RNA sequence: GGGAACGACUCGAGUAGAGUCGAAAACUAAUGCGUGAGCAUUAGACGUAUCGUACGCGAUACGAGCGGCGCGUGAGCGCCGCACAAUGCGGUGACGCAUUGACAUCCACUACGGUGGAUGAAAGUGUAGUAUCUGUUCUUUUCAGUGUAACAACUGAAAUGACCUAGGCUCAUACACAUUUUUUGGCAGGACGGGAAGAGGAGACGUCGCGACCCUCGCAGAGUCGUUCUUGACUUGGUCGCUUGAUGUUUCUUCUUCCCGUUCUAGGUGUCGCUUCGGCGACACCAAAAGAAACAACAACAACAAC
Reactivity to DMS in 0.01 (KOAc 150mM, MgCl2 10mM, bicine 150mM(pH8.5), 24C), signal-to-noise 1, nucleotides 027 to 266: c020u000a000a030u000g000c070g000u040g000a200g000c010a000u000u000a010g000a300c030g010u000a000u000c000g000u010a090c080g020c000g010a010u000a010c000g010a160g020c050g000g000c010g060c040g020u040g000a300g010c020g220c060c000g010c040a010c000a000a020u010g020c020g000g000u000g000a160c010g010c000a000u000u000g000a300c010a010u020c000c020a000c010u040a120c210g030g020u000g000g010a000u000g010a060a070a030g010u000g000u020a020g000u000a080u010c000u010g020u020u000c010u020u010u010u010c000a000g000u000g000u000a160a130c120a300a070c000u000g010a000a020a000u000g000a010c090c070u010a010g000g010c140u040c110a110u010a010c020a030c010a040u000u010u010u000u030u000g030g010c240a120g020g000a010c020g020g000g000a000a020g000a010g000g010a050g020a010c020g000u000c020g000c000g000a020c000c010c290u030c170g000c170a160g000a010g000u000c000g030u020u000c010u000u030g000a050c160u000u010g000g010u000c010g010c010u000u010g020a020u000g020u000u010u040c000u000u000c020u000u000c000c000c000g000u000u000c010u010a030
An RNA of 307 nucleotides, treated with DMS and read out base by base.
For DMS, 1,938 sequencing reads were counted.